[RMDB]
RNA sequence: GGGAACGACUCGAGUAGAGUCGAAAAUGACAGCCUAUAGGAUGCCCAAAUUUCUGUUUAGAGCUAUUCCUUGUGUUUUGGGCGUAGACACAAAGUGUUUUUAAGUGUAGAACAGCAUCUAAUGGUAUAUCCGGAAGGAGUUCGCUCCUUCCGGAUAAAAAGAAACAACAACAACAAC
Reactivity to DMS in 0.01 (KOAc 150mM, MgCl2 10mM, bicine 150mM(pH8.5), 24C), signal-to-noise 1, nucleotides 027 to 126: u010g000a120c120a190g020c000c000u000a040u010a240g020g000a040u020g000c030c000c040a050a120a120u020u010u010c050u010g010u000u010u000a150g000a200g050c040u000a100u000u000c040c010u010u000g000u000g000u000u000u010u000g020g000g000c040g000u000a020g000a020c000a020c010a030a100a070g010u000g020u000u000u000u010u000a030a030g030u000g010u000a140g000a010a010c040a090g010c070a020u010c040u010a080a170u020g020g000u000a110

This 177-nucleotide RNA was probed chemically with DMS. Values cover nucleotides 27 to 126. Conditions: 150 mM KOAc, 10 mM MgCl2 and 150 mM bicine (pH 8.5), 24 C. The DMS profile rests on 946 reads. Source: RMDB library OK2TRN, as collected in RNAgym. For DMS the reverse transcriptase was MarathonRT.